RNA sequence: GGGAACGACUCGAGUAGAGUCGAAAAUAGCGAAGUAGGAUUUUAUGCGUCAAGUGUUCACAGGCUGGGGAGUAGCCGUGAAACGAAAAGCAGAAAGCGUGCUGCUUACGAUAUAAUUUCCGCACCCAUAAGAAGUCUCUGUUCGCAGAGACUUCAAGCUACAAAGAGCGUUCGCGCUCUUUGUAGCAAAAGAAACAACAACAACAAC
Reactivity to 2A3 in 0.01 (KOAc 150mM, MgCl2 10mM, bicine 150mM(pH8.5), 24C), signal-to-noise 2, nucleotides 027 to 156: u090a020g010c020g030a010a030g030u110a070g030g020a010u010u000u030u020a000u030g010c000g000u020c080a100a040g010u020g030u080u000c010a010c080a120g020g000c010u060g010g010g000g020a120g090u180a000g010c010c000g010u010g000a000a000a030c020g000a000a040a020a000g000c010a000g040a050a200a040g230c160g070u170g060c030u000g000c000u010u010a010c000g000a000u000a000u010a050a000u000u010u000c010c000g010c020a020c000c010c010a040u080a080a110g010a000a000g000u000c000u000c010u000g030u020u020c140g030c050a000g000a000g000a000c000u000u010c000a000a000